Chemical mapping of a 207-nucleotide RNA with DMS and 2A3.
DMS adducts were read by reverse transcription with MarathonRT.
Reactivities are given for positions 27 through 156.
RNA sequence: GGGAACGACUCGAGUAGAGUCGAAAAGUAUUCAUUCUCCGUUCUCGAUAGAGAUUGGAGUCAUACAACCCCAGAAACCAUUCCUUAUACCUUGAGUAUUGCUGAAUUCAGUUUAGCGUGCAUGCUCUUAAUGGGUGCACCUUCGGGUGCACCCAAACAUAAGAAUCAGAUUCGUCUGAUUCUUAUGAAAAGAAACAACAACAACAAC
Reactivity to DMS in 0.01 (KOAc 150mM, MgCl2 10mM, bicine 150mM(pH8.5), 24C), signal-to-noise 2, nucleotides 027 to 156: g020u000a020u010u010c070a110u000u000c000u000c000c010g030u000u000c000u000c020g010a230u000a140g020a000g000a050u000u010g010g000a020g030u010c260a060u010a090c040a120a160c030c000c000c030a110g010a110a110a110c060c020a110u000u000c000c040u010u000a110u000a040c070c020u000u000g010a100g010u000a050u000u000g000c060u010g010a050a090u010u000c130a130g010u000u000u010a060g020c040g020u000g020c030a060u000g000c010u010c020u000u000a090a180u000g010g020g000u010g020c000a020c020c000u000u000c300g060g020g020u000g000c000a000c000c000c020a000a000a070
Reactivity to 2A3 in 0.01 (KOAc 150mM, MgCl2 10mM, bicine 150mM(pH8.5), 24C), signal-to-noise 4, nucleotides 027 to 156: g010u020a040u070u200c100a050u180u030c020u000c000c000g020u020u000c010u000c010g220a300u180a280g010a000g000a010u050u170g030g000a000g010u020c000a010u010a020c010a020a080c040c000c000c010a020g130a050a110a010c060c020a120u140u250c040c020u180u090a070u110a300c010c040u080u140g010a000g010u030a050u180u110g000c020u020g030a130a100u170u220c030a110g140u010u050u130a040g000c030g020u040g030c030a010u010g000c000u020c000u080u120a160a090u110g000g020g000u000g000c010a010c010c000u010u120c240g090g000g000u000g000c020a000c020c010c000a010a000a000
The reactions ran in a buffer of 150 mM KOAc, 10 mM MgCl2 and 150 mM bicine (pH 8.5), at 24 C.